[RMDB]
RNA sequence: GGGAACGACUCGAGUAGAGUCGAAAACGGUGGUCCUUGCGGGGCUAGACAGUGACGGUACGGCAGGCGUCGCUGCAACCAAGAAGUUCGGCGGCCUAUCGAUCGUGGAGGUAGGCGAAAGCGGAAAUGGACCUCUCGAGGAAGGCAGGGGGGCAGCGCACCAUGCAUCGUUCGCGAUGCAUGGUGCAAAAGAAACAACAACAACAAC
Reactivity to 2A3 in 0.01 (KOAc 150mM, MgCl2 10mM, bicine 150mM(pH8.5), 24C), signal-to-noise 1, nucleotides 027 to 156: c030g000g150u080g010g000u050c000c040u000u060g030c040g020g010g030g040c030u040a000g060a050c040a090g020u040g020a000c010g000g070u150a100c040g000g040c080a020g000g040c030g020u110c000g020c000u040g030c040a050a070c050c030a180a010g090a050a000g000u040u070c090g110g010c010g000g000c000c000u020a050u020c060g040a050u000c040g060u190g020g060a070g000g030u060a010g020g090c040g000a090a000a000g030c040g070g030a090a080a050u080g000g020a020c010c000u040c000u000c000g020a050g020g010a020a020g020g000c030a010g000g000g000g010g010g020c040a000g050c020

The record gives the reactivity of an RNA of 207 nucleotides to 2A3. 2A3 adducts were read by reverse transcription with SuperScript II with manganese.